Annotation
The record gives the reactivity of an RNA of 207 nucleotides to 2A3 and DMS. The DMS profile rests on 4,386 reads. The reactions ran in a buffer of 150 mM KOAc, 10 mM MgCl2 and 150 mM bicine (pH 8.5), at 24 C. The 2A3 profile rests on 2,130 reads. 2A3 adducts were read by reverse transcription with SuperScript II with manganese. DMS adducts were read by reverse transcription with MarathonRT.
RNA sequence: GGGAACGACUCGAGUAGAGUCGAAAAGAUGGCAUAGCCUUAAAGUUAAGGGCGAGGUUCAAACGAGGAAAGGCUUACGGUGGAUACCUAGGCACCCAGAGACGAGGAAGGGCGUAGUAAGCGACGAAAUGCUUCGGGGAGUUGAAAAUAAGCGUAGCAUACAUGCUGAGUUCGCUCAGCAUGUAUGAAAAGAAACAACAACAACAAC
Reactivity to 2A3 in 0.01 (KOAc 150mM, MgCl2 10mM, bicine 150mM(pH8.5), 24C), signal-to-noise 3, nucleotides 027 to 156: g030a000u070g040g000c060a110u060a070g000c010c000u080u070a070a130a050g100u070u160a090a110g030g010g020c070g020a040g030g000u080u080c080a150a010a000c050g000a030g060g000a090a060a000g070g000c010u060u060a030c050g000g060u040g070g030a040u050a110c000c000u030a030g080g000c020a020c010c010c010a030g020a010g000a040c050g000a010g020g010a010a050g010g010g000c020g020u000a010g040u010a030a030g020c010g050a030c020g030a020a040a080u130g010c010u050u050c020g010g000g020g000a060g000u040u050g060a080a120a040a050u160a060a020g020c020g060u020a020g040
Reactivity to DMS in 0.01 (KOAc 150mM, MgCl2 10mM, bicine 150mM(pH8.5), 24C), signal-to-noise 2, nucleotides 027 to 156: g010a100u000g030g070c060a090u000a100g010c000c020u000u000a090a070a140g010u000u000a100a090g040g010g010c030g000a040g010g000u000u000c050a030a080a130c050g000a080g030g010a080a060a130g020g020c030u000u000a090c060g050g040u030g010g000a120u010a020c010c070u010a090g030g030c050a070c020c020c020a160g030a120g000a050c040g010a100g000g020a050a090g030g000g020c020g030u000a040g010u010a050a080g000c010g000a110c020g010a040a070a090u000g010c020u000u000c020g030g010g030g030a120g020u010u010g000a060a080a070a120u000a060a070g030c050g010u010a110g020